RNA sequence: GGGAACGACUCGAGUAGAGUCGAAAACGUCGGCGAACUUCUUGCUCGGCAUGUAGUUCAGCUCUUCGAGCAGCGGUAUGUAGCAGUAUGACUCGUUGUCACACUGCAGGCCCGGAUAGCGAUUCCAGCGCAUCAGCACCUUCGGGUGCUGAUGCGCAAAAGAAACAACAACAACAAC
Reactivity to 2A3 in 0.01 (KOAc 150mM, MgCl2 10mM, bicine 150mM(pH8.5), 24C), signal-to-noise 2, nucleotides 027 to 126: c060g030u030c020g000g060c000g070a020a000c030u140u140c020u090u190g000c020u000c300g130g060c060a000u150g080u230a140g030u050u040c100a000g010c000u010c000u070u070c040g060a040g000c010a030g000c020g100g000u150a180u200g100u090a120g000c000a000g010u090a050u020g000a010c040u110c290g100u040u190g040u000c000a000c000a010c000u050g100c000a070g010g020c000c000c000g100g010a120u150a070g130c070g080a070u050u030c020c010a010
An RNA of 177 nucleotides, treated with 2A3 and read out base by base. Values cover nucleotides 27 to 126. For 2A3, 535 sequencing reads were counted. The RNA was probed in 150 mM KOAc, 10 mM MgCl2 and 150 mM bicine (pH 8.5) at 24 C. It was measured as part of the RMDB library OK1LIB.